[RMDB]
RNA sequence: GGGAACGACUCGAGUAGAGUCGAAAAUGUGUCUGUGUAUGUGUGAGGAUUAAAUUGUGUAUGUGUGAGGACUAAUUGCCACUACUGGAUCCUCAAAGUGGUAAGAAGUGUUCUUAUUAAUAAUGACGCUCUAGAUUCAAUUCGUUGAAUCUAGAGCAAAAGAAACAACAACAACAAC
Reactivity to 2A3 in 0.01 (KOAc 150mM, MgCl2 10mM, bicine 150mM(pH8.5), 24C), signal-to-noise 2, nucleotides 027 to 126: u150g030u000g000u000c010u020g070u030g020u050a020u120g080u020g050u030g030a050g060g020a020u090u100a090a050a100u150u120g010u020g040u110a050u130g180u030g010u020g000a010g020g010a010c000u050a070a050u010u030g020c020c000a010c010u070a040c030u070g080g030a100u120c000c020u040c060a020a010a000g010u010g020g020u020a000a010g060a090a040g100u050g000u040u000c010u030u050a100u090u050a080a160u130a100a040u050g050a030c050
Reactivity to DMS in 0.01 (KOAc 150mM, MgCl2 10mM, bicine 150mM(pH8.5), 24C), signal-to-noise 4, nucleotides 027 to 126: u000g000u000g010u000c020u000g010u000g010u000a050u000g030u010g010u010g020a080g020g010a070u010u000a050a060a120u000u010g020u000g000u000a040u010g020u010g010u000g010a040g020g010a040c040u010a050a210u010u000g000c020c000a020c010u000a140c140u010g010g020a120u010c080c040u010c030a030a110a030g010u000g000g020u000a010a040g000a110a120g020u010g010u000u000c020u000u000a070u010u010a080a070u000a060a110u000g010a170c190